The record gives the reactivity of an RNA of 207 nucleotides to 2A3.
Values cover nucleotides 27 to 156.
It was measured as part of the RMDB library OK3TST.
For 2A3 the reverse transcriptase was SuperScript II with manganese.
[RMDB]
RNA sequence: GGGAACGACUCGAGUAGAGUCGAAAAGAUGACUACCGCUGGCAUUGGAGAGAGUAUGGCGGACACGCAGAGGAAGACGAUGCUGAGUAUCGAGCUGGUGUUGAUAGCGAGCACCAGCAUGAUCAACGAGAUGAGCAGGCGAACGUCGCCGUUGCGCAGAGGACUAGAGGUUCGCCUCUAGUCCUCUAAAAGAAACAACAACAACAAC
Reactivity to 2A3 in 0.01 (KOAc 150mM, MgCl2 10mM, bicine 150mM(pH8.5), 24C), signal-to-noise 1, nucleotides 027 to 156: g040a030u150g070a060c000u110a090c040c000g040c020u030g000g000c030a030u020u200g060g000a040g000a000g000a000g060u100a040u170g050g000c090g020g000a000c040a000c000g060c000a000g000a110g100g020a030a130g030a000c040g040a060u110g020c080u010g020a040g100u020a010u040c010g000a050g000c000u000g000g000u000g020u000u030g050a280u080a120g170c120g020a000g000c030a000c000c000a000g000c000a000u040g000a010u020c060a110a050c110g020a060g000a090u180g040a060g000c010a020g090g000c060g010a060a060c050g090u090c010g040c030c010g040u060u020g010c020g020c020